Structure probing data (DMS and 2A3) for a 177-nucleotide construct. The DMS profile rests on 2,650 reads. For 2A3 the reverse transcriptase was SuperScript II with manganese. The RNA was probed in 150 mM KOAc, 10 mM MgCl2 and 150 mM bicine (pH 8.5) at 24 C.
RNA sequence: GGGAACGACUCGAGUAGAGUCGAAAAAGCCAGUCGCCAGUACGCAACCUACCAGCAGAGCCCAGGGCUCACAGGACCUAAAGGAGUAGCGCCCAUGGCUGAUCGUGUCCUGAGGGGCAGUCGCCUCAGUUGAGUUUACGUUCGCGUAAACUCAACUAAAAGAAACAACAACAACAAC
Reactivity to DMS in 0.01 (KOAc 150mM, MgCl2 10mM, bicine 150mM(pH8.5), 24C), signal-to-noise 3, nucleotides 027 to 126: a080g010c010c020a080g020u010c080g010c030c040a040g020u000a040c070g030c050a080a070c060c020u000a100c050c060a100g010c090a080g000a090g000c010c010c090a130g010g000g030c030u000c030a060c110a070g010g010a060c050c030u000a080a100a100g000g000a090g000u000a080g010c120g010c050c020c040a070u000g010g010c020u010g000a080u010c110g010u000g000u010c020c000u020g000a110g010g010g000g000c070a100g020u000c090g000c030c020u000c060
Reactivity to 2A3 in 0.01 (KOAc 150mM, MgCl2 10mM, bicine 150mM(pH8.5), 24C), signal-to-noise 2, nucleotides 027 to 126: a000g030c010c000a030g030u080c040g000c020c000a060g030u040a020c020g000c040a050a040c000c010u110a050c000c020a010g100c030a030g040a020g040c000c020c040a070g070g060g020c010u040c020a060c000a000g060g010a040c030c070u160a050a120a060g070g040a060g030u050a030g020c010g070c010c020c010a080u100g060g000c020u050g010a070u090c120g040u020g010u060c000c020u000g050a160g010g000g000g070c030a010g130u110c060g000c030c000u030c020